[RMDB]
An RNA of 177 nucleotides, treated with 2A3 and DMS and read out base by base.
For 2A3, 8,051 sequencing reads were counted.
Values are in units of 0.01, from 0 to 300, in steps of 10.
The reactions ran in a buffer of 150 mM KOAc, 10 mM MgCl2 and 150 mM bicine (pH 8.5), at 24 C.
Reactivities are given for positions 27 through 126.
2A3 adducts were read by reverse transcription with SuperScript II with manganese.
It was measured as part of the RMDB library OK1LIB.
RNA sequence: GGGAACGACUCGAGUAGAGUCGAAAACAGCAAUUUAUUCGCAAUUGUCGUCGACGCUGCAAUUGUGCGGAAAUCGAUAUGCGUUGUUAUUUUAACCGAUCAUUUCCUUCAUUUCGUCGCAGCCAUACCUCAUUUUAGCAUUCGUGCUAAAAUGAGGAAAAGAAACAACAACAACAAC
Reactivity to 2A3 in 0.01 (KOAc 150mM, MgCl2 10mM, bicine 150mM(pH8.5), 24C), signal-to-noise 8, nucleotides 027 to 126: c050a020g120c080a070a100u080u130u140a220u120u230c060g030c050a010a020u030u040g050u060c040g020u030c050g040a030c050g000c030u020g000c000a010a060u000u040g010u020g070c050g030g030a000a020a010u060c100g010a010u060a120u220g090c180g020u010u020g040u080u080a240u080u220u030u130a030a010c000c000g010a010u010c010a020u010u000u030c020c000u060u120c050a140u060u160u210c060g030u010c020g000c040a020g020c010c020a060u090a100
Reactivity to DMS in 0.01 (KOAc 150mM, MgCl2 10mM, bicine 150mM(pH8.5), 24C), signal-to-noise 3, nucleotides 027 to 126: c080a110g000c170a050a050u040u030u010a060u070u020c070g020c130a030a060u010u000g000u000c130g020u020c020g000a060c080g010c090u000g000c000a020a050u000u030g030u020g000c300g010g010a040a000a010u000c190g010a000u000a020u070g040c110g030u010u000g030u040u000a050u020u060u060u010a060a080c030c020g000a000u000c010a000u010u010u000c080c030u030u000c090a040u000u000u000c140g000u000c040g020c040a010g030c000c060a060u010a110